[RMDB]
RNA sequence: GGGAACGACUCGAGUAGAGUCGAAAAUCUUGCUCAAGGAAAAGUAGCAAUGAGAAUGUACAAUCAUAUGGGUCAAGGUAUCCAUCAUGCAACUUCGUCAAUUUUAACAUCUAUUAUGGGUGAUGUGAUAACACAUUUUAUAAAGCUUUACAUUCAACAUCCGACACAUCUUCGGAUGUGUCGGAUGAAAAGAAACAACAACAACAAC
Reactivity to 2A3 in 0.01 (KOAc 150mM, MgCl2 10mM, bicine 150mM(pH8.5), 24C), signal-to-noise 1, nucleotides 027 to 156: u000c000u000u000g000c000u070c080a000a010g140g110a150a190a060a150g110u110a000g020c030a000a040u010g040a060g000a100a030u150g010u030a070c000a010a100u030c010a030u040a130u210g020g020g020u030c080a110a070g190g000u140a140u000c010c010a000u000c030a040u070g110c000a030a030c100u140u110c070g100u060c130a130a080u000u000u090u230a000a030c000a000u070c000u080a070u300u270a190u140g040g000g140u030g070a040u000g040u010g060a080u130a280a000c010a000c000a050u180u140u000u000a180u110a050a010a010g000c000u000u020u070a080c040a030u160u060c000a110a080